The record gives the reactivity of an RNA of 207 nucleotides to 2A3 and DMS. For DMS the reverse transcriptase was MarathonRT. The reactions ran in a buffer of 150 mM KOAc, 10 mM MgCl2 and 150 mM bicine (pH 8.5), at 24 C. 2A3 adducts were read by reverse transcription with SuperScript II with manganese. The 2A3 profile rests on 2,519 reads. High DMS reactivity at an A or C suggests that its Watson-Crick edge is free.
RNA sequence: GGGAACGACUCGAGUAGAGUCGAAAACAAUCUACUAGUCAGGAUUAUGGAGAUGGUACCAAAUAUACAUUUAAAUCCGUAACUAGAUCAGAUCAUGAGUGUGAAUCUAGCUUAGAUCUGACGUCUAAGGAAGUAACUGUGACAUGUCCUGCGUUUAUCGUAACGAUAGGUUCGCCUAUCGUUACGAAAAAGAAACAACAACAACAAC
Reactivity to 2A3 in 0.01 (KOAc 150mM, MgCl2 10mM, bicine 150mM(pH8.5), 24C), signal-to-noise 5, nucleotides 027 to 156: c010a010a080u080c020u120a100c020u080a060g130u130c030a010g000g000a020u070u090a040u290g090g000a170g020a090u050g080g020u090a110c060c070a000a100a010u260a020u050a040c050a020u060u100u100a030a060a020u050c020c010g000u030a010a050c010u010a040g020a110u020c000a000g000a020u000c020a150u200g020a010g030u120g080u060g240a110a060u060c110u130a070g000c000u000u020a010g000a010u000c000u010g020a000c050g040u020c020u080a070a040g030g010a020a040g030u040a070a030c030u010g010u040g110a000c010a010u020g000u010c000c000u030g000c050g020u020u030u040a130
Reactivity to DMS in 0.01 (KOAc 150mM, MgCl2 10mM, bicine 150mM(pH8.5), 24C), signal-to-noise 2, nucleotides 027 to 156: c060a050a160u000c040u000a110c030u000a070g020u000c030a090g030g020a040u000u000a100u000g040g040a140g020a110u010g000g010u010a080c020c030a120a090a160u000a190u010a030c010a070u000u000u000a080a050a130u010c010c020g020u000a070a030c040u000a050g000a140u010c040a040g020a030u000c010a100u010g010a090g000u000g000u010g000a100a130u000c160u000a140g010c010u010u000a060g010a030u000c020u000g010a040c060g050u000c030u010a040a100g000g020a020a080g000u000a050a080c050u010g050u000g020a070c010a160u000g000u000c010c040u010g020c070g010u000u010u000a100